Structure probing data (DMS and 2A3) for a 177-nucleotide construct. The RNA was probed in 150 mM KOAc, 10 mM MgCl2 and 150 mM bicine (pH 8.5) at 24 C. The data come from the RNA Mapping Database (RMDB), library OK2TST. For DMS, 9,417 sequencing reads were counted.
[RMDB]
RNA sequence: GGGAACGACUCGAGUAGAGUCGAAAAUGGUGGCACGUAAACUUGGCUUGCCAUUGGUGGCAAUCCCCACUAUUGCAGCGACCUGCGCGGCCUGGACACCGCUUUCAGUUUGGUAUAACGAUGCCGGCCAAAUCAGUCAAUUCGUUGACUGAUUUGGAAAAGAAACAACAACAACAAC
Reactivity to DMS in 0.01 (KOAc 150mM, MgCl2 10mM, bicine 150mM(pH8.5), 24C), signal-to-noise 6, nucleotides 027 to 126: u000g020g030u000g010g000c060a050c110g010u010a070a070a120c130u000u010g010g000c080u000u010g020c020c030a080u000u000g030g040u000g020g000c070a090a080u010c050c070c020c030a040c070u000a060u000u000g020c080a080g010c060g000a090c050c020u000g010c170g020c030g000g010c050c040u000g020g010a110c100a080c040c030g010c040u000u000u010c070a080g000u000u000u000g010g020u000a060u010a070a070c080g010a110u000g010c010c030g000g020
Reactivity to 2A3 in 0.01 (KOAc 150mM, MgCl2 10mM, bicine 150mM(pH8.5), 24C), signal-to-noise 5, nucleotides 027 to 126: u090g040g010u060g030g010c050a010c110g080u090a050a100a110c080u070u080g060g000c020u030u080g020c020c020a040u030u120g130g020u050g040g000c040a040a100u090c000c020c030c010a020c020u120a100u050u130g020c020a030g000c020g080a050c000c000u070g010c060g010c030g040g010c020c010u040g000g020a030c020a010c030c020g010c000u030u120u090c040a050g020u040u130u160g050g000u080a100u040a170a040c080g030a060u100g000c010c000g020g010